[RMDB]
RNA sequence: GGGAACGACUCGAGUAGAGUCGAAAAAGCGGCUCGCGGCGACUAUAGUUAUGGGUGACGCGCUAUCAUACGCCAAACCGCAAUACGGUGAGAUCUGCAGUAGGCUCCCACUGGGGUUACUCAACACCCAUUCAAGCACAUUCGUGUGCUUGAAUGGAAAAGAAACAACAACAACAAC
Reactivity to 2A3 in 0.01 (KOAc 150mM, MgCl2 10mM, bicine 150mM(pH8.5), 24C), signal-to-noise 1, nucleotides 027 to 126: a000g000c000g000g000c030u030c060g040c000g020g000c000g020a030c030u130a060u060a160g050u190u060a090u180g070g020g040u060g000a030c030g040c020g000c070u030a050u140c040a040u050a180c000g000c010c000a090a050a020c000c030g090c100a060a020u200a110c050g030g000u030g000a090g000a110u070c030u060g000c000a020g000u060a030g000g040c030u000c020c000c010a000c030u000g040g000g000g000u070u050a070c030u050c050a020a010c000a060c020
Reactivity to DMS in 0.01 (KOAc 150mM, MgCl2 10mM, bicine 150mM(pH8.5), 24C), signal-to-noise 3, nucleotides 027 to 126: a070g000c040g020g000c050u000c090g040c110g000g010c040g010a130c120u020a020u010a060g000u000u000a100u010g000g000g020u000g040a080c140g010c150g010c030u000a040u010c140a110u000a220c040g020c020c020a070a160a090c030c010g000c080a120a030u010a090c040g000g010u010g010a070g000a050u010c020u000g000c020a030g000u000a100g000g000c050u000c020c060c010a070c070u000g010g000g000g000u000u010a100c080u020c050a050a060c160a100c170